[RMDB]
RNA sequence: GGGAACGACUCGAGUAGAGUCGAAAAGAGACCGCUCCGAGAGUUGGGAGAAGAAAGAGAGCGAAUGUGUCCGGAGGGAACCCCCAAGCUUUCAACAGAGGAAGAGAGCAAGAUAGAGGAGCCCCCGUUAGCCCUAUGUUCGCAUAGGGCAAAAGAAACAACAACAACAAC
Reactivity to 2A3 in 0.01 (KOAc 150mM, MgCl2 10mM, bicine 150mM(pH8.5), 24C), signal-to-noise 4, nucleotides 027 to 129: g090a000g000a050c010c030g020c090u040c060c030g030a020g010a010g060u110u120g020g000g010a030g020a020a000g020a010a050a000g060a010g000a010g000c050g020a090a050u100g070u070g020u040c020c040g020g000a020g000g020g020a030a050c010c010c010c000c000a010a040g020c070u080u210u100c040a080a100c040a080g110a020g040g000a020a040g010a000g000a010g010c020a020a020g020a090u140a010g020a010g010g010a000g000c000c020c000c000c010g070u110u160a010
Reactivity to DMS in 0.01 (KOAc 150mM, MgCl2 10mM, bicine 150mM(pH8.5), 24C), signal-to-noise 5, nucleotides 027 to 129: g040a000g030a010c000c070g020c030u030c070c070g020a060g000a080g030u050u030g030g080g010a070g000a050a030g000a020a050a050g050a030g000a040g030c080g030a000a000u050g040u040g000u040c080c210g050g040a110g000g000g000a090a120c040c020c020c020c030a100a130g040c120u010u010u000c120a060a070c150a090g030a080g000g010a090a080g010a050g050a060g080c170a050a040g000a100u020a000g000a000g050g000a060g020c020c010c000c000c010g040u060u080a160